[RMDB]
RNA sequence: GGGAACGACUCGAGUAGAGUCGAAAAAUGGCCUCGGCCGAGUACAUAGUCGUACAUGGUACGCGCGGCCCGUACUGGCGCGCGAUCCAGGCCAGUACUAGCGCAUGAUAGAUGGCGCUGAGCGGCCCAGCUCACGACACUUCGGUGUCGUGAGCUGAAAAGAAACAACAACAACAAC
Reactivity to DMS in 0.01 (KOAc 150mM, MgCl2 10mM, bicine 150mM(pH8.5), 24C), signal-to-noise 2, nucleotides 027 to 126: a130u010g040g010c010c010u010c070g010g020c000c000g000a160g000u000a060c040a100u000a110g010u020c140g030u040a050c050a180u000g040g000u000a170c010g020c060g020c010g000g010c020c010c220g010u000a080c170u030g000g010c000g010c060g000c040g000a200u000c050c030a160g020g020c000c000a070g000u000a050c040u020a020g040c030g010c030a000u010g000a160u020a130g000a080u020g000g020c020g030c000u000g000a070g000c110g000g000c000c010
Reactivity to 2A3 in 0.01 (KOAc 150mM, MgCl2 10mM, bicine 150mM(pH8.5), 24C), signal-to-noise 1, nucleotides 027 to 126: a000u080g030g010c000c000u050c060g010g000c000c010g000a020g010u010a030c030a060u230a050g080u150c100g000u000a070c030a120u090g050g020u120a150c010g060c000g010c000g050g140c020c010c000g010u060a080c070u090g030g000c050g040c020g000c030g080a060u000c010c020a070g000g010c000c000a000g020u000a010c050u060a010g020c000g000c000a010u060g090a090u240a210g160a080u210g090g000c000g000c000u020g040a090g020c150g000g000c000c000